[RMDB]
RNA sequence: GGGAACGACUCGAGUAGAGUCGAAAACGGGCGUAGAUCUGGAGACGGAUUGAGCGCGCUGUUCGCUGCGCCUAGGUGUUAUCCCUAGGGUGUUAGGCAGUGGAACUGUGACAGCCGUAAGGGAUGACCGGCUAUGUAGCUUCGGCUGCAUAGCCGGAAAAGAAACAACAACAACAAC
Reactivity to 2A3 in 0.01 (KOAc 150mM, MgCl2 10mM, bicine 150mM(pH8.5), 24C), signal-to-noise 3, nucleotides 027 to 126: c000g010g030g050c010g020u030a030g010a050u010c010u010g040g020a050g030a040c000g000g000a000u000u060g040a100g070c070g000c000g000c020u030g000u080u020c020g000c000u010g010c040g090c000c000u000a040g000g010u070g080u220u220a090u070c000c000c000u000a020g040g020g010u070g100u090u080a140g060g000c000a000g000u080g120g070a050a070c010u020g010u020g090a050c020a010g050c020c000g040u080a070a130g050g010g000a050u030g020a060
Reactivity to DMS in 0.01 (KOAc 150mM, MgCl2 10mM, bicine 150mM(pH8.5), 24C), signal-to-noise 2, nucleotides 027 to 126: c070g000g010g000c010g020u020a230g000a060u000c010u020g000g000a200g000a200c020g010g000a040u000u000g010a120g000c030g000c050g020c050u000g000u000u010c010g000c030u010g000c020g010c000c000u000a030g040g010u010g010u020u030a090u020c140c000c000u010a090g000g010g010u010g000u030u030a120g030g020c000a000g010u010g010g020a020a200c020u020g000u000g000a050c060a070g000c010c000g010u010a020a050g000g000g000a030u000g010a120
An RNA of 177 nucleotides, treated with 2A3 and DMS and read out base by base.
2A3 adducts were read by reverse transcription with SuperScript II with manganese.
DMS adducts were read by reverse transcription with MarathonRT.
Source: RMDB library OK1LIB, as collected in RNAgym.
Conditions: 150 mM KOAc, 10 mM MgCl2 and 150 mM bicine (pH 8.5), 24 C.